[RMDB]
RNA sequence: GGGAACGACUCGAGUAGAGUCGAAAAGUGCAUAAUGCGAAUUUAUCUGUAUUACAGAAAGCGGCUGAUAUUUUUUUAGAUUACAUCGACACAUAGUUACAUUGCAGCCUGCCGUCGACGUGUCGCGAAGUCGACAAACAUUCGUGUUUGUCGACUUAAAAGAAACAACAACAACAAC
Reactivity to DMS in 0.01 (KOAc 150mM, MgCl2 10mM, bicine 150mM(pH8.5), 24C), signal-to-noise 4, nucleotides 027 to 126: g020u010g010c050a090u010a110a040u000g000c040g010a120a100u010u010u000a070u010c030u000g010u000a150u000u010a070c040a060g000a040a130a200g020c040g010g000c040u010g000a110u010a000u000u000u010u010u000u010u000a070g010a080u000u020a050c070a070u010c010g000a020c020a070c080a090u010a070g020u010u000a090c140a100u000u010g010c020a050g010c000c030u010g030c050c060g000u000c060g020a070c090g010u010g000u000c020g020c270g010
Reactivity to 2A3 in 0.01 (KOAc 150mM, MgCl2 10mM, bicine 150mM(pH8.5), 24C), signal-to-noise 3, nucleotides 027 to 126: g080u050g000c030a080u110a180a060u300g010c040g040a110a090u100u090u060a080u080c000u010g040u040a250u110u240a030c000a000g120a070a100a010g010c040g040g000c030u050g090a040u030a180u190u110u090u010u010u020u090a040g010a030u090u050a050c040a080u090c010g010a010c020a010c000a020u100a040g060u040u070a080c040a110u100u130g050c000a010g030c010c040u050g000c000c010g020u050c000g000a040c010g020u030g010u020c010g000c010g040
Chemical mapping of a 177-nucleotide RNA with DMS and 2A3. For DMS, 2,882 sequencing reads were counted. Reactivities are given for positions 27 through 126. DMS (dimethyl sulfate) methylates the pairing face of unpaired adenines and cytosines.